[RMDB]
RNA sequence: GGGAACGACUCGAGUAGAGUCGAAAAGCAUGCGCGACCGCAUCCGCCUGAUGCGCAAGGAGCUGGUCGAGAAGAUCAAGACCCAGGGCGUGGCGCAGGACUUCAGCUUCGUGCUGGCGCAGCGCGACUACCACCUGGUCUUCGGACCAGGUGGUAGAAAAGAAACAACAACAACAAC
Reactivity to 2A3 in 0.01 (KOAc 150mM, MgCl2 10mM, bicine 150mM(pH8.5), 24C), signal-to-noise 1, nucleotides 027 to 126: g010c000a000u070g040c000g010c000g080a070c000c030g030c000a140u010c010c030g040c040c000u120g090a110u160g010c040g000c090a030a180g030g010a070g010c070u080g030g000u000c000g000a030g070a030a000g010a110u030c050a100a030g070a150c020c030c010a040g100g060g000c040g030u040g000g000c030g000c050a090g040g070a070c020u060u040c060a040g020c060u080u130c160g090u060g000c000u060g000g010c020g000c000a030g000c020g010c010g040a020
Reactivity to DMS in 0.01 (KOAc 150mM, MgCl2 10mM, bicine 150mM(pH8.5), 24C), signal-to-noise 2, nucleotides 027 to 126: g000c040a060u000g010c110g020c010g050a120c190c050g010c020a080u000c060c040g050c060c050u000g010a140u000g040c110g020c070a090a090g020g020a060g030c020u000g000g010u020c010g020a160g020a110a110g000a050u020c010a090a090g030a220c050c010c040a200g020g050g000c040g010u010g010g000c000g020c030a050g000g010a140c070u000u010c050a020g010c050u000u000c200g010u000g010c000u000g040g020c110g000c040a080g020c000g000c000g040a170
An RNA of 177 nucleotides, treated with 2A3 and DMS and read out base by base. For 2A3, 1,116 sequencing reads were counted. The reactions ran in a buffer of 150 mM KOAc, 10 mM MgCl2 and 150 mM bicine (pH 8.5), at 24 C. For DMS the reverse transcriptase was MarathonRT.